RNA sequence: GGGAACGACUCGAGUAGAGUCGAAAACAGUACUGUACGGUGCUCUUAGUCACUGCCAUGUGGGACCUGGCCCCACAUAUCAUCCACACUACAGCACCAUACGGUACUGCAGAGGAUCUCAACCCCUAACUGCCCAGAAUUUCGAUUCUGGGCAGUUAAAAGAAACAACAACAACAAC
Reactivity to 2A3 in 0.01 (KOAc 150mM, MgCl2 10mM, bicine 150mM(pH8.5), 24C), signal-to-noise 2, nucleotides 027 to 126: c000a000g010u000a010c000u000g000u000a000c050g010g010u000g000c000u000c040u090u100a000g000u000c020a010c040u010g060c060c030a050u030g010u000g000g000g040a070c040c100u110g110g000c020c000c010c000a000c000a000u030a000u030c110a060u100c100c030a050c010a000c070u000a010c010a030g010c020a000c000c000a000u000a000c000g000g000u000a010c000u000g020c010a020g010a080g100g050a150u010c040u020c060a070a090c010c000c000c000u000
Reactivity to DMS in 0.01 (KOAc 150mM, MgCl2 10mM, bicine 150mM(pH8.5), 24C), signal-to-noise 1, nucleotides 027 to 126: c000a030g000u030a000c020u010g020u000a050c300g000g010u000g000c000u000c260u000u000a030g000u000c080a090c050u000g000c070c200a000u000g000u000g000g000g010a110c000c060u010g040g060c080c000c000c050a020c000a000u000a040u000c080a150u100c230c030a120c220a000c000u000a000c300a010g040c000a000c030c030a050u000a000c050g000g060u050a000c000u000g000c060a070g040a050g000g000a110u000c000u000c000a100a200c050c000c000c000u000
Conditions: 150 mM KOAc, 10 mM MgCl2 and 150 mM bicine (pH 8.5), 24 C. An RNA of 177 nucleotides, treated with 2A3 and DMS and read out base by base. The DMS profile rests on 894 reads.